[RMDB]
RNA sequence: GGGAACGACUCGAGUAGAGUCGAAAAGUGGACGCUGCCUGGCCAGCGGCAGCCCGCGCUGCGCGUCAGGAACGGCGCCACCCGCGCCGUACGCGUUAUCUGGCGCGCCGGCCGGCGCGCUUCGCGAAGUAAUACCUAGCUUCGGCUAGGUAUUACUAAAAGAAACAACAACAACAAC
Reactivity to DMS in 0.01 (KOAc 150mM, MgCl2 10mM, bicine 150mM(pH8.5), 24C), signal-to-noise 1, nucleotides 027 to 126: g030u000g000g000a070c050g020c010u000g000c020c010u010g040g000c030c090a250g010c020g030g030c000a180g000c070c050c090g020c050g020c070u010g010c020g000c100g000u000c100a080g010g000a130a060c060g020g000c020g030c030c080a140c170c100c070g060c040g000c030c050g080u010a040c110g000c060g010u000u000a060u010c070u010g000g010c050g040c020g000c060c280g040g000c110c140g030g070c050g010c020g000c050u000u000c000g000c010g000a180